[RMDB]
Overview
Structure probing data (2A3 and DMS) for a 177-nucleotide construct. The reactions ran in a buffer of 150 mM KOAc, 10 mM MgCl2 and 150 mM bicine (pH 8.5), at 24 C. Values cover nucleotides 27 to 126.
RNA sequence: GGGAACGACUCGAGUAGAGUCGAAAACACCUGCAGCACAUCAGGCCAACUGUGAGAUGGGUGGCCGCCUCGAUGAGCAUUCCAGAGGUGGAGACUUUGAUUGCCAGACAGGAAGAGUCAUACAAUCCGAACGUUUUACAUUCGUGUAAAACGUUCGAAAAGAAACAACAACAACAAC
Reactivity to 2A3 in 0.01 (KOAc 150mM, MgCl2 10mM, bicine 150mM(pH8.5), 24C), signal-to-noise 6, nucleotides 027 to 126: c070a030c000c020u040g020c050a060g050c020a050c000a080u120c030a040g050g040c040c020a080a060c050u050g040u120g080a100g040a150u190g050g010g050u030g030g020c000c000g030c000c000u040c020g120a170u130g040a030g030c050a040u170u050c050c040a030g010a020g030g020u040g040g030a070g020a010c030u070u070u080g050a030u010u070g050c030c030a020g000a150c010a010g060g050a080a050g030a020g080u030c010a020u070a150c050a010a070u030c040
Reactivity to DMS in 0.01 (KOAc 150mM, MgCl2 10mM, bicine 150mM(pH8.5), 24C), signal-to-noise 3, nucleotides 027 to 126: c060a060c000c000u000g010c150a050g000c020a050c060a040u030c080a080g000g010c090c100a050a070c110u010g000u000g030a070g000a050u000g000g000g010u000g010g000c040c020g010c020c050u000c050g000a210u030g000a100g030c180a160u020u010c100c090a150g000a020g010g060u000g000g000a030g010a140c070u010u000u000g010a070u000u010g030c100c040a060g010a120c140a060g000g000a090a080g000a120g010u000c060a100u040a080c110a020a060u050c040